[RMDB]
RNA sequence: GGGAACGACUCGAGUAGAGUCGAAAAAGAAAGGUUACUGUUACUAAACUGUACCAUGAAGUCAGACUCAGCAAACAGAUUUCUAUUCAUCAGUUAGGACAAAAGACUUUUACAUAAAUUUAACCUUCAGAUGUAACAGUCUAGUUGAGUGCAAUAAAUCAUCGAGUACGUUCGCGUACUCGAUGAUAAAAGAAACAACAACAACAAC
Reactivity to 2A3 in 0.01 (KOAc 150mM, MgCl2 10mM, bicine 150mM(pH8.5), 24C), signal-to-noise 1, nucleotides 027 to 156: a000g010a030a010a000g040g040u120u090a010c090u190g010u150u140a160c020u160a100a110a150c020u070g020u080a030c000c060a080u080g020a000a000g000u000c020a010g010a150c000u010c050a050g000c090a100a050a050c010a030g050a060u090u150u000c060u100a200u010u060c100a100u000c000a020g030u020u030a010g020g030a020c010a070a220a000a030g010a000c010u040u040u000u060a000c030a000u070a060a190a070u300u250u210a130a130c050c010u110u100c060a070g000a160u030g000u000a000a000c000a020g000u000c000u080a010g000u010u120g060a030g010u050g040c000a020a020u030a070a300
Conditions: 150 mM KOAc, 10 mM MgCl2 and 150 mM bicine (pH 8.5), 24 C. Structure probing data (2A3) for a 207-nucleotide construct. It was measured as part of the RMDB library OK3TST.